[RMDB]
RNA sequence: GGGAACGACUCGAGUAGAGUCGAAAAUUUGAGCUGUUCAAUAACUCAGAGAAGCCUUUGACUUUGUGGAAAAGGUUUAAAGGAUUUAAAAGAUCUAUUGCUGUACAGCUAUCUCUGGUUUAUGCUACGUAGAUACGUAUUUCGAUACGUAUCUACGAAAAGAAACAACAACAACAAC
Reactivity to 2A3 in 0.01 (KOAc 150mM, MgCl2 10mM, bicine 150mM(pH8.5), 24C), signal-to-noise 5, nucleotides 027 to 126: u140u080u170g030a010g020c010u030g020u150u040c030a030a060u050a070a020c010u020c160a000g010a000g000a050a000g010c000c000u030u010u000g000a020c000u120u120u300g110u250g050g010a040a070a010a000g000g000u010u020u040a020a040a010g030g000a010u030u080u180a110a170a020a030g030a010u000c010u030a070u050u150g000c020u020g060u140a070c050a100g000c000u030a060u060c020u000c010u010g060g040u030u060u040a070u110g020c020u020a050
Reactivity to DMS in 0.01 (KOAc 150mM, MgCl2 10mM, bicine 150mM(pH8.5), 24C), signal-to-noise 7, nucleotides 027 to 126: u010u010u010g010a060g020c010u000g010u000u000c070a100a060u000a020a050c050u010c030a050g010a190g000a060a100g000c000c000u000u010u000g000a150c010u000u000u000g010u020g020g000a200a060a020a010g000g010u000u000u010a020a050a100g010g010a040u000u000u000a060a090a180a160g000a030u000c040u000a090u000u000g010c270u000g010u010a040c130a020g010c000u000a100u000c020u000c010u000g010g000u000u000u000a040u010g010c090u000a110